[RMDB]
RNA sequence: GGGAACGACUCGAGUAGAGUCGAAAAAGGCGAGUUUUCGCGGUAGAGAGCCGAAUAUCCGCGAUGGGCGAUGAUGGAUGGGGUUGUCAUGAUAGCGUCCUUUGUUUUUGCGAUGUGUGUUCUCUAGCGAGGUAUAUCAGUUCGCUGAUAUACCUCGAAAAGAAACAACAACAACAAC
Reactivity to 2A3 in 0.01 (KOAc 150mM, MgCl2 10mM, bicine 150mM(pH8.5), 24C), signal-to-noise 2, nucleotides 027 to 126: a030g080g000c030g050a100g050u080u060u000u050c000g010c070g010g010u060a020g000a010g000a020g140c040c040g000a030a030u130a040u060c050c020g010c020g060a070u070g040g030g010c030g030a110u190g000a050u060g100g020a100u080g030g000g030g050u070u040g060u040c030a030u090g070a100u060a010g020c000g000u020c000c000u020u070u080g140u010u120u000u080u050g050c050g030a060u010g040u030g030u010g010u060u020c090u000c000u030a020g040
Reactivity to DMS in 0.01 (KOAc 150mM, MgCl2 10mM, bicine 150mM(pH8.5), 24C), signal-to-noise 3, nucleotides 027 to 126: a080g000g000c010g000a050g000u020u010u010u000c020g020c020g020g010u000a020g010a030g000a030g020c010c040g000a110a080u010a050u010c010c010g010c010g000a040u000g010g000g000c030g010a060u020g010a070u030g000g000a050u010g000g000g010g000u010u020g010u010c050a070u010g000a070u020a070g000c060g020u000c010c010u010u020u010g010u000u000u000u000u000g010c060g030a080u010g000u000g010u000g000u010u000c020u000c000u000a050g000
Chemical mapping of a 177-nucleotide RNA with 2A3 and DMS.
The 2A3 profile rests on 907 reads.
The reactions ran in a buffer of 150 mM KOAc, 10 mM MgCl2 and 150 mM bicine (pH 8.5), at 24 C.
The DMS profile rests on 13,809 reads.
DMS adducts were read by reverse transcription with MarathonRT.